Structure probing data (DMS and 2A3) for a 207-nucleotide construct.
RNA sequence: GGGAACGACUCGAGUAGAGUCGAAAAUUCGGCAGAGCAAACAGAAGUUGGUUAGAUUUCCAGAGAAAGUGCCCUUUCAGUCUUUAAGACGCAUUGAGAUCCUCUAACAAGACAGGGAUGGAAAGAUAAUACUACUCUUCAGUGUAUUUCAUGAAUCUAACUAACCAUCGUUCGCGAUGGUUAGUUAAAAAGAAACAACAACAACAAC
Reactivity to DMS in 0.01 (KOAc 150mM, MgCl2 10mM, bicine 150mM(pH8.5), 24C), signal-to-noise 3, nucleotides 027 to 156: u000u000c050g030g030c040a090g000a100g020c040a080a080a180c050a090g020a060a110g010u000u000g000g010u000u000a080g020a210u020u000u000c020c000a110g010a160g010a050a110a080g010u000g000c050c040c010u000u000u000c040a140g000u000c040u000u000u010a080a040g030a080c040g020c070a120u010u020g030a130g020a120u010c020c040u000c050u000a050a150c130a060a060g000a100c070a090g010g020g030a080u020g010g000a070a080a090g010a100u000a040a120u000a050c020u000a050c000u000c040u000u000c050a090g010u000g010u000a080u000u010u000c030a140u000g000a060a090u000c040
Reactivity to 2A3 in 0.01 (KOAc 150mM, MgCl2 10mM, bicine 150mM(pH8.5), 24C), signal-to-noise 4, nucleotides 027 to 156: u060u030c040g030g010c030a010g020a010g040c010a030a050a050c010a070g090a110a010g080u070u080g040g010u030u050a030g000a090u040u000u040c030c020a020g000a010g040a100a080a020g080u070g050c000c000c000u010u100u110c070a030g030u000c010u030u120u060a080a030g020a030c030g030c130a080u060u120g040a050g010a120u040c010c020u020c020u020a110a040c030a120a020g050a020c040a010g000g000g040a020u040g000g040a050a060a010g020a000u060a070a020u040a110c020u010a020c010u020c000u100u080c080a070g020u020g030u090a140u070u110u110c080a060u120g060a060a020u070c040
For DMS, 6,407 sequencing reads were counted. The data come from the RNA Mapping Database (RMDB), library OK3TST.